Structure probing data (DMS and 2A3) for a 177-nucleotide construct.
The reactions ran in a buffer of 150 mM KOAc, 10 mM MgCl2 and 150 mM bicine (pH 8.5), at 24 C.
RNA sequence: GGGAACGACUCGAGUAGAGUCGAAAACACUGCAUGAGGCAAGCGACGCUCGAAGAUGGCGAAGCACGGUCCGCUCUGGGCGUCUGUGCGUAGGUGGGUCGGUGUGAGCGAGGCGUUUGCAGAGGGAAAUGCACCGACUGUUCGCAGUCGGUGCAUUAAAAGAAACAACAACAACAAC
Reactivity to DMS in 0.01 (KOAc 150mM, MgCl2 10mM, bicine 150mM(pH8.5), 24C), signal-to-noise 1, nucleotides 027 to 126: c050a110c050u020g020c050a050u000g000a120g000g000c070a050a090g000c030g020a170c000g000c000u000c030g000a120a070g000a090u000g000g010c000g050a150a300g010c060a010c100g000g000u040c130c000g030c030u030c090u010g020g060g030c010g000u010c040u050g030u000g000c030g000u000a100g030g000u000g000g010g000u000c020g000g010u030g000u010g000a100g030c020g000a220g090g000c010g010u000u060u000g000c040a130g000a060g000g010g030a000
Reactivity to 2A3 in 0.01 (KOAc 150mM, MgCl2 10mM, bicine 150mM(pH8.5), 24C), signal-to-noise 2, nucleotides 027 to 126: c070a020c030u020g000c040a100u080g100a110g110g080c060a020a040g000c000g010a020c010g010c060u030c090g010a090a070g010a120u170g140g000c000g090a140a000g020c000a000c020g000g000u020c000c000g000c120u080c110u190g000g000g000c000g030u080c100u090g040u060g000c000g000u050a070g080g000u070g020g030g030u070c020g000g090u030g040u060g010a040g010c000g000a020g020g030c000g000u000u100u020g000c000a020g030a070g020g010g000a080